[RMDB]
RNA sequence: GGGAACGACUCGAGUAGAGUCGAAAACGAACCAGUUCAUGUUGAAAAAUGUUUGGAUGAGCUGUGGGUGGGGGUGAAAGGCCAAUCAAACUGAGAGAUAGCUCGUACUCCCCGAAAUGCAUUUAGGAGCUUGUAAUACCUUCGGGUAUUACAAGCUAAAAGAAACAACAACAACAAC
Reactivity to DMS in 0.01 (KOAc 150mM, MgCl2 10mM, bicine 150mM(pH8.5), 24C), signal-to-noise 3, nucleotides 027 to 126: c070g000a160a190c090c000a030g010u010u000c090a050u050g000u000u010g020a000a050a040a090a300u030g000u030u010u000g010g040a030u020g010a020g000c000u020g010u000g000g000g000u050g000g010g010g040g000u010g010a050a110a070g020g000c000c060a060a080u000c030a060a130a110c210u030g000a130g020a100g020a050u010a180g000c020u000c020g020u010a130c270u000c010c020c010c000g000a080a070a050u020g000c190a100u020u040u050a070g000g000
Reactivity to 2A3 in 0.01 (KOAc 150mM, MgCl2 10mM, bicine 150mM(pH8.5), 24C), signal-to-noise 2, nucleotides 027 to 126: c000g010a050a010c000c000a000g010u090u040c000a000u120g170u190u140g190a050a000a090a040a120u130g130u050u170u170g060g010a000u010g000a010g030c000u010g010u140g030g000g070u240g030g000g000g030g000u080g010a120a110a050g050g000c000c030a000a000u010c000a000a060a230c110u220g000a030g050a000g000a100u110a020g060c060u100c040g000u010a070c000u000c000c000c000c000g030a000a030a030u260g020c070a010u020u060u110a080g030g030
Structure probing data (DMS and 2A3) for a 177-nucleotide construct.
The RNA was probed in 150 mM KOAc, 10 mM MgCl2 and 150 mM bicine (pH 8.5) at 24 C.
For DMS the reverse transcriptase was MarathonRT.
For 2A3 the reverse transcriptase was SuperScript II with manganese.
Values cover nucleotides 27 to 126.